[RMDB]
RNA sequence: GGGAACGACUCGAGUAGAGUCGAAAACGGUGUAUAUGAAUUUCAAGGUGAAUACUCUUUCACUCAACACGUAAAUAUCACCGGUCAGGACGGAAACAGUAGGAUCCUCUCGUCGUCUUUUGAGAGACAUCAAUUACCUAUUCGUAGGUAAUUGAUGAAAAGAAACAACAACAACAAC
Reactivity to DMS in 0.01 (KOAc 150mM, MgCl2 10mM, bicine 150mM(pH8.5), 24C), signal-to-noise 9, nucleotides 027 to 126: c020g010g010u000g010u020a020u000a020u000g010a160a100u000u000u010c140a130a300g000g010u000g000a020a020u010a100c180u010c130u000u000u000c010a010c010u000c090a080a120c270a100c200g000u000a070a120a030u000a020u000c000a020c000c000g000g010u000c120a080g000g010a030c040g010g010a070a050a080c160a080g000u010a050g000g000a120u000c040c010u000c050u000c040g020u000c090g010u000c030u000u000u010u000g010a060g000a080g010a220
Reactivity to 2A3 in 0.01 (KOAc 150mM, MgCl2 10mM, bicine 150mM(pH8.5), 24C), signal-to-noise 9, nucleotides 027 to 126: c010g020g000u020g120u040a030u010a000u060g100a120a120u120u160u190c130a130a060g030g000u010g020a020a020u140a200c080u090c030u130u030u010c010a010c020u120c030a050a070c060a010c150g070u080a020a110a010u030a010u010c000a000c000c000g000g030u060c050a030g020g050a010c030g020g020a070a080a040c030a050g120u120a050g080g070a060u030c020c010u020c010u020c030g090u020c020g040u030c130u070u120u110u140g100a080g000a000g020a010
The record gives the reactivity of an RNA of 177 nucleotides to DMS and 2A3. The data come from the RNA Mapping Database (RMDB), library OK2TST. 2A3 adducts were read by reverse transcription with SuperScript II with manganese. The reactions ran in a buffer of 150 mM KOAc, 10 mM MgCl2 and 150 mM bicine (pH 8.5), at 24 C.